[RMDB]
RNA sequence: GGGAACGACUCGAGUAGAGUCGAAAAGAUAUGGAGCCAUGACAGGGAGCGUGUGUUCGGAAACGAACAUAAACGCGACGAUCUGUAUGGCUCCUAAGUCAAAGUUGAGGCCUUCGGGCCUCAACAACAAUGAAUAUCUGUUCGCAGAUAUUCAUUGAAAAGAAACAACAACAACAAC
Reactivity to DMS in 0.01 (KOAc 150mM, MgCl2 10mM, bicine 150mM(pH8.5), 24C), signal-to-noise 8, nucleotides 027 to 126: g000a030u000a150u010g000g000a010g020c000c000a020u000g010a080c010a020g000g010g010a040g030c010g030u000g000u000g010u000u000c010g010g000a030a030a080c000g010a010a010c000a000u000a040a130a080c010g020c000g000a090c300g000a040u010c010u000g010u000a020u000g010g010c000u000c000c000u000a010a050g000u000c010a120a110a140g000u000u000g000a020g010g010c000c000u000u010c250g030g020g010c000c000u000c000a000a000c010a120a190
Reactivity to 2A3 in 0.01 (KOAc 150mM, MgCl2 10mM, bicine 150mM(pH8.5), 24C), signal-to-noise 2, nucleotides 027 to 126: g010a000u020a010u060g000g000a000g000c010c000a030u080g190a090c010a020g050g060g050a150g020c000g000u020g000u000g000u000u010c010g000g000a010a020a020c000g000a010a010c000a010u080a030a300a020c010g030c010g030a090c060g050a090u000c000u010g020u040a020u030g000g000c000u000c000c000u000a000a000g000u000c010a000a060a030g000u000u010g010a000g000g020c020c000u090u150c300g140g000g000c000c000u010c000a000a000c000a000a000